[RMDB]
RNA sequence: GGGAACGACUCGAGUAGAGUCGAAAAUAACAAUCUAACUGCACCUAGAAAUUCUUGGGAGGCUAUGGCUCUGAACUUUAAGUUAAUAGGUAUUGGCGGUACACCUUGUAUAAAGGUUGCUGCUAUGGAUACAACUUAUCUUCGGAUAAGUUGUAUCAAAAGAAACAACAACAACAAC
Reactivity to 2A3 in 0.01 (KOAc 150mM, MgCl2 10mM, bicine 150mM(pH8.5), 24C), signal-to-noise 4, nucleotides 027 to 126: u060a010a020c020a000a110u030c020u100a030a060c030u070g000c050a020c010c000u020a030g080a080a180a060u120u040c040u060u070g030g020g000a020g040g000c010u070a070u140g050g010c010u010c010u050g050a040a050c020u080u110u090a070a020g030u040u080a100a040u030a130g040g030u070a080u140u120g010g000c000g000g010u000a010c030a000c060c020u010u000g080u050a140u100a190a040a010g000g000u010u000g000c000u000g010c000u020a040u070g060
Reactivity to DMS in 0.01 (KOAc 150mM, MgCl2 10mM, bicine 150mM(pH8.5), 24C), signal-to-noise 4, nucleotides 027 to 126: u010a100a130c100a080a110u020c060u000a070a110c100u000g000c070a070c040c020u000a060g010a150a080a090u000u010c030u000u010g010g000g010a120g010g010c050u010a040u010g010g020c040u010c020u000g010a080a100c050u000u000u010a080a080g000u000u000a050a080u000a040g020g010u000a090u030u000g000g000c000g010g000u000a010c230a000c000c010u000u000g000u010a090u020a070a010a010g000g010u000u000g000c000u000g000c000u000a010u000g010

Background
This 177-nucleotide RNA was probed chemically with 2A3 and DMS. 2A3 adducts were read by reverse transcription with SuperScript II with manganese. The RNA was probed in 150 mM KOAc, 10 mM MgCl2 and 150 mM bicine (pH 8.5) at 24 C. DMS adducts were read by reverse transcription with MarathonRT.